Structure probing data (DMS and 2A3) for a 177-nucleotide construct. DMS adducts were read by reverse transcription with MarathonRT. Reactivities are given for positions 27 through 126. 2A3 adducts were read by reverse transcription with SuperScript II with manganese.
[RMDB]
RNA sequence: GGGAACGACUCGAGUAGAGUCGAAAACCUGCUCGGUAAGAGCAAAUCCCGUAACUGCGAACAACAUCGUACGUUUCUCCCGUCAAGCAGCCCCUGUUGCUGCCUGACCCUAUUAAGGGAGAUGGGGUACCUGUGCAGGGUUCGCCCUGCACAGGUAAAAAGAAACAACAACAACAAC
Reactivity to DMS in 0.01 (KOAc 150mM, MgCl2 10mM, bicine 150mM(pH8.5), 24C), signal-to-noise 2, nucleotides 027 to 126: c080c030u000g000c000u000c030g010g080u070a130a080g010a020g000c010a040a070a090u030c000c010c000g010u100a080a010c060u000g000c050g000a000a070c170a070a240c300a140u000c000g020u000a020c120g050u000u010u010c040u000c000c000c000g000u000c000a070a080g020c000a030g000c000c020c140c180u000g000u000u000g000c000u000g000c000c100u000g010a040c060c260c170u000a090u040u000a110a070g000g000g000a000g050a020u010g020g000g000g000
Reactivity to 2A3 in 0.01 (KOAc 150mM, MgCl2 10mM, bicine 150mM(pH8.5), 24C), signal-to-noise 5, nucleotides 027 to 126: c000c000u010g000c000u000c000g140g070u290a170a060g000a000g030c000a010a000a050u050c000c000c000g050u050a020a020c000u030g000c010g010a060a020c030a080a050c030a300u020c020g010u030a060c110g000u030u080u000c010u020c000c000c000g000u020c010a000a000g000c000a000g000c010c010c030c070u120g060u190u120g010c000u000g000c000c010u000g010a000c030c030c000u250a240u240u210a110a070g020g000g000a020g020a040u100g030g020g000g000